[RMDB]
RNA sequence: GGGAACGACUCGAGUAGAGUCGAAAAGAGUUUAAGCGUUUUGAAGACCGGCUGACCGGACUGAUUGAAUCGCUGUCACCGUCAGGGCGUCGGCGACUGAGUGCCGAACUGGCGAAACGUCUGCGGCAGAGUCAGCAGCGUCGGGUGAUGGCACAGACAGGUACUACGGAUUCGUCCGUAGUACCUGAAAAGAAACAACAACAACAAC
Reactivity to 2A3 in 0.01 (KOAc 150mM, MgCl2 10mM, bicine 150mM(pH8.5), 24C), signal-to-noise 2, nucleotides 027 to 156: g070a050g020u100u150u170a050a020g040c030g020u040u040u070u100g100a090a030g030a060c000c040g010g000c070u060g030a080c000c000g040g000a060c020u010g030a130u070u210g130a080a080u050c030g030c040u030g000u030c000a000c010c010g020u000c000a040g000g010g030c030g030u150c110g060g020c000g030a010c020u060g070a040g170u050g010c020c010g000a230a250c060u020g000g020c000g070a180a190a050c060g010u010c000u050g030c010g010g000c000a010g000a010g160u010c040a050g000c000a000g010c000g000u000c070g000g090g000u000g000a030u010g010g000c010a000c000a020g070a000
Source: RMDB library OK3TST, as collected in RNAgym. Chemical mapping of a 207-nucleotide RNA with 2A3. For 2A3 the reverse transcriptase was SuperScript II with manganese. The 2A3 profile rests on 848 reads. Values cover nucleotides 27 to 156. The RNA was probed in 150 mM KOAc, 10 mM MgCl2 and 150 mM bicine (pH 8.5) at 24 C.